[RMDB]
RNA sequence: GGGAACGACUCGAGUAGAGUCGAAAAGAUAUGGACUACUCCCCACCGAUAUCCUGCGAUGAAAUCGGAAACGAUGGAGCAGUGCAUAUCGAGGUAGUCCUAAGUCAAACGGUCGUUCGCGACCGAACUGAUUGUUCUAGUUCGCUAGAACAAUCAGAAAAGAAACAACAACAACAAC
Reactivity to 2A3 in 0.01 (KOAc 150mM, MgCl2 10mM, bicine 150mM(pH8.5), 24C), signal-to-noise 5, nucleotides 027 to 126: g040a060u200a140u230g000g010a000c000u000a010c010u150c030c030c000c000a020c000c010g000a000u000a000u000c000c010u010g000c010g300a300u040g040a020a050a010u000c010g000g000a050a050a030c020g010a020u030g000g020a020g000c000a010g010u030g050c070a010u010a010u020c000g000a020g020g000u010a000g000u000c000c000u010a110a020g170u140c130a130a080a100c030g010g000u000c010g030u080u120c300g010c010g140a000c000c000g010a030a010
Reactivity to DMS in 0.01 (KOAc 150mM, MgCl2 10mM, bicine 150mM(pH8.5), 24C), signal-to-noise 5, nucleotides 027 to 126: g010a070u000a150u000g000g010a030c010u000a010c010u010c160c020c020c050a300c140c020g000a010u000a000u000c020c000u000g000c030g000a120u010g000a070a090a010u010c010g000g000a080a060a140c010g000a030u000g000g000a060g000c010a010g010u010g010c130a010u010a010u000c000g010a100g030g010u000a020g000u010c000c000u000a040a070g010u010c080a070a070a190c020g010g010u000c000g020u000u020c230g020c010g000a010c000c000g010a030a100
About this RNA:
Chemical mapping of a 177-nucleotide RNA with 2A3 and DMS. For DMS, 6,573 sequencing reads were counted. For 2A3 the reverse transcriptase was SuperScript II with manganese. It was measured as part of the RMDB library TTRDEL. Conditions: 150 mM KOAc, 10 mM MgCl2 and 150 mM bicine (pH 8.5), 24 C. High DMS reactivity at an A or C suggests that its Watson-Crick edge is free.